[RMDB]
RNA sequence: GGGAACGACUCGAGUAGAGUCGAAAAAAAAGAUAUGGAUAAACGGGAGCUUGAGGACUCGAAGAACGGUCGUCGGAAACGACGACCGGGAGAGUCCAAAGCGAAGAACGUUUAUCCUAAGUCAAAACCCAAUAUAUUACUUCGGUAAUAUAUUGGGAAAAGAAACAACAACAACAAC
Reactivity to DMS in 0.01 (KOAc 150mM, MgCl2 10mM, bicine 150mM(pH8.5), 24C), signal-to-noise 1, nucleotides 027 to 126: a010a030a100a190g000a020u000a300u010g000g000a000u000a000a010a030c000g030g030g030a180g020c000u000u000g030a300g010g000a020c000u000c010g010a060a210g000a160a280c030g000g010u020c010g000u000c010g020g020a100a040a130c000g010a020c000g010a010c000c000g000g010g000a020g000a030g000u000c000c000a030a010a030g020c000g000a100a110g000a100a110c020g000u000u000u000a010u000c000c000u000a010a070g000u010c000a090a070a080a120
An RNA of 177 nucleotides, treated with DMS and read out base by base. The data come from the RNA Mapping Database (RMDB), library TTRDES. Conditions: 150 mM KOAc, 10 mM MgCl2 and 150 mM bicine (pH 8.5), 24 C.